[RMDB]
RNA sequence: GGGAACGACUCGAGUAGAGUCGAAAAACCUUCAUUCGUGAAGGUAAAAAAGAUAUGGAUCCACGAAGGCGAUAAGCUCCACGGUGUCGGAAACGACAUUGGAGCUUUUGACGCCUGAGUGGAUCCUAAGUCAAAAAUAACCGAUUCGUCGGUUAAACUAGUUAACGAAAUUCGUUUCGUUAACUAGAAAAGAAACAACAACAACAAC
Reactivity to 2A3 in 0.01 (KOAc 150mM, MgCl2 10mM, bicine 150mM(pH8.5), 24C), signal-to-noise 3, nucleotides 027 to 156: a000c010c000u000u000c020a080u030u110c190g140u070g030a020a010g000g020u060a100a040a040a000a000a000g050a010u070a020u060g000g000a000u000c000c000a000c000g010a010a010g010g000c010g010a020u010a110a000g000c000u000c020c000a040c160g100g000u010g000u000c000g000g020a070a090a080c010g000a010c000a000u010u070g000g010a000g000c010u010u010u000u000g010a010c020g000c000c000u000g000a000g000u000g000g000a000u000c000c000u000a000a000g000u000c010a000a000a000a000a100u100a020a000c000c000g010a010u030u060c200g030u000c000g090g010u050u040a030a010a020
Reactivity to DMS in 0.01 (KOAc 150mM, MgCl2 10mM, bicine 150mM(pH8.5), 24C), signal-to-noise 2, nucleotides 027 to 156: a020c020c000u000u010c010a090u010u000c240g030u010g020a060a040g030g020u000a000a020a080a060a060a060g000a090u000a300u010g000g000a050u010c000c000a030c020g000a300a010g000g030c020g010a220u000a010a040g000c000u010c000c020a120c300g020g020u000g000u000c000g020g000a130a120a200c020g010a020c000a040u000u000g000g010a020g000c000u000u000u000u000g010a190c080g030c000c000u000g000a300g020u010g000g000a000u000c030c010u020a010a030g000u000c030a020a100a090a110a100u000a040a020c000c000g010a070u010u000c300g040u000c010g000g020u000u010a010a040a200